[RMDB]
RNA sequence: GGGAACGACUCGAGUAGAGUCGAAAAGACAUAAUAAGCCAGUGGGACAUGGAGCUGGAGAAGCGGUCGCGCGCUUUCAUGGGCCACGCCAUCGCGCUGGCCGACUGGGACCGCGCCAUCCUCGCCAAGCGACUUGUAUUUUCGAAUACAAGUCGCUAAAAGAAACAACAACAACAAC
Reactivity to DMS in 0.01 (KOAc 150mM, MgCl2 10mM, bicine 150mM(pH8.5), 24C), signal-to-noise 2, nucleotides 027 to 126: g000a090c080a040u000a080a070u010a100a110g020c020c020a060g020u010g010g010g020a110c080a080u010g000g000a100g040c070u010g010g000a140g000a110a060g010c040g010g040u010c280g030c070g020c080g000c300u010u000u000c040a040u000g000g010g000c040c020a080c180g020c020c080a060u010c250g000c050g010c070u010g000g000c010c000g000a060c250u000g010g000g000a010c040c010g040c000g020c000c110a100u000c010c040u000c100g010c020c100a090
Reactivity to 2A3 in 0.01 (KOAc 150mM, MgCl2 10mM, bicine 150mM(pH8.5), 24C), signal-to-noise 1, nucleotides 027 to 126: g010a000c020a010u300a150a030u120a130a150g000c040c010a010g030u040g010g080g080a060c020a130u100g060g000a050g040c000u010g010g010a030g030a030a000g030c060g020g010u000c020g000c000g010c030g030c100u000u070u040c010a040u140g040g010g000c030c010a040c110g060c010c020a250u150c040g000c010g000c020u000g000g000c000c040g000a020c030u020g000g020g020a000c000c000g010c010g010c000c000a020u020c020c000u000c020g040c000c000a010

Structure probing data (DMS and 2A3) for a 177-nucleotide construct. For DMS, 1,321 sequencing reads were counted. Values cover nucleotides 27 to 126. For 2A3 the reverse transcriptase was SuperScript II with manganese. DMS adducts were read by reverse transcription with MarathonRT. Conditions: 150 mM KOAc, 10 mM MgCl2 and 150 mM bicine (pH 8.5), 24 C.